[RMDB]
RNA sequence: GGGAACGACUCGAGUAGAGUCGAAAAUAAUCUUGGUUGCUGGCGUCUGAGGUUAGGCCAUAAAAGGCCAGAUCGUACUGCUUCUUACAUCUGGAAAAGCAGUAUUAAAUCAAUCAGGUUAGUUAUAUUGAAGAGCCUUGAGCUAUGGCAGACAAUACGAUUACAUAGUGUUCGCACUAUGUAAUCGAAAAGAAACAACAACAACAAC
Reactivity to 2A3 in 0.01 (KOAc 150mM, MgCl2 10mM, bicine 150mM(pH8.5), 24C), signal-to-noise 5, nucleotides 027 to 156: u120a010a040u040c030u040u070g040g000u040u090g020c040u020g010g040c020g070u050c030u040g020a030g010g060u080u080a060g030g040c010c020a050u170a100a110a010a010g020g000c000c000a030g010a010u040c020g000u000a010c010u010g010c000u020u000c030u060u140a150c060a180u080c160u260g080g000a050a140a010a000g000c000a000g000u000a000u020u090a010a010a010u060c060a000a030u020c020a000g040g030u020u030a010g040u030u070a130u030a060u160u060g040a100a060g010a020g060c000c050u030u080g030a020g030c050u090a050u080g020g000c020a030g030a100c040a020a040u100a060
Reactivity to DMS in 0.01 (KOAc 150mM, MgCl2 10mM, bicine 150mM(pH8.5), 24C), signal-to-noise 2, nucleotides 027 to 156: u000a050a090u000c050u000u020g030g020u000u020g030c000u000g000g020c050g020u000c030u000g030a090g020g020u000u000a090g010g020c010c010a070u010a070a100a120a200g030g020c030c000a090g010a050u000c060g010u010a010c010u000g000c000u000u000c000u000u010a130c080a160u020c130u020g020g010a050a010a010a030g010c010a020g030u000a020u000u000a050a040a070u000c050a030a090u000c050a100g020g000u000u000a080g010u000u010a090u000a140u000u000g010a110a120g030a150g020c010c000u000u000g010a120g050c030u010a050u000g010g000c020a110g010a150c030a060a060u000a140

The data come from the RNA Mapping Database (RMDB), library ARCHII.
Chemical mapping of a 207-nucleotide RNA with 2A3 and DMS.
The 2A3 profile rests on 3,843 reads.
High 2A3 reactivity points to a flexible backbone, as in loops and unpaired stretches.
The RNA was probed in 150 mM KOAc, 10 mM MgCl2 and 150 mM bicine (pH 8.5) at 24 C.
For DMS, 5,032 sequencing reads were counted.
DMS adducts were read by reverse transcription with MarathonRT.